[RMDB]
Chemical mapping of a 207-nucleotide RNA with 2A3. The 2A3 profile rests on 613 reads. 2A3 adducts were read by reverse transcription with SuperScript II with manganese. Conditions: 150 mM KOAc, 10 mM MgCl2 and 150 mM bicine (pH 8.5), 24 C.
RNA sequence: GGGAACGACUCGAGUAGAGUCGAAAAACUCCUAUUCCAACACGUCCUCGUCGUACAGACUGGUAACAUGUGUCACCACAUAUCCAAGCUUGGGUACACGGGCUUGACCCAACCCCUUGGGCGGAUGAAAACCAGAUUACGUUCGCGUAAUCUGGAACUUCUACGCGAAGUUCGCUUCGCGUAGAAGAAAAGAAACAACAACAACAAC
Reactivity to 2A3 in 0.01 (KOAc 150mM, MgCl2 10mM, bicine 150mM(pH8.5), 24C), signal-to-noise 1, nucleotides 027 to 156: a000c080u040c030c000u060a100u130u050c060c010a050a000c050a030c050g060u000c000c010u080c090g030u010c010g050u070a150c020a030g040a110c010u010g010g050u090a140a120c060a020u080g050u020g080u080c040a010c090c000a110c050a180u090a030u060c000c010a000a010g020c080u030u000g000g000g000u020a020c060a020c020g000g000g000c050u120u300g190a300c000c000c040a000a010c000c000c010c000u000u000g000g000g000c000g000g000a000u040g120a080a000a010a000c000c000a000g000a010u000u000a040c010g030u020u040c140g020c000g150u000a000a000u020c000u010g000g000a000a000